Conditions: 150 mM KOAc, 10 mM MgCl2 and 150 mM bicine (pH 8.5), 24 C. Structure probing data (DMS and 2A3) for a 177-nucleotide construct. High 2A3 reactivity points to a flexible backbone, as in loops and unpaired stretches. For DMS, 2,500 sequencing reads were counted. For 2A3, 1,333 sequencing reads were counted. For 2A3 the reverse transcriptase was SuperScript II with manganese. Values cover nucleotides 27 to 126. Source: RMDB library OK1LIB, as collected in RNAgym.
RNA sequence: GGGAACGACUCGAGUAGAGUCGAAAAGAAAACACUCGACAGUGGAAGAGUGGAACACUGGUAAAUUGGAGAAAAUAGUCGCAUGACGACUAGUCAUGGAUCCGUUAAAGCUAAUGCGAAAAGAAAAGGGUUAUCAAAAGUUCGCUUUUGAUAACCCAAAAGAAACAACAACAACAAC
Reactivity to DMS in 0.01 (KOAc 150mM, MgCl2 10mM, bicine 150mM(pH8.5), 24C), signal-to-noise 2, nucleotides 027 to 126: g000a060a070a110a170c100a030c000u040c000g000a140c050a150g030u000g000g010a110a130g000a010g060u010g000g010a130a070c130a040c050u000g030g010u010a010a100a070u000u000g000g000a010g000a150a060a100a070u000a020g000u030c010g050c020a050u040g030a060c000g000a010c060u000a000g000u000c080a040u000g000g000a140u000c010c040g010u010u000a130a140a080g040c040u000a040a210u000g000c030g020a160a010a040a040g040a070a070a110a120
Reactivity to 2A3 in 0.01 (KOAc 150mM, MgCl2 10mM, bicine 150mM(pH8.5), 24C), signal-to-noise 2, nucleotides 027 to 126: g040a000a070a010a000c000a060c000u040c040g090a020c060a130g020u080g110g090a150a000g000a060g080u030g000g000a010a010c010a060c040u050g020g030u120a010a100a110u160u260g000g060a000g050a000a000a020a040u080a000g030u010c020g020c070a130u280g040a140c010g000a040c080u060a040g050u060c000a000u040g060g030a010u000c000c070g040u000u120a000a000a230g000c030u010a090a060u160g080c060g030a100a060a110a100g070a000a000a030a150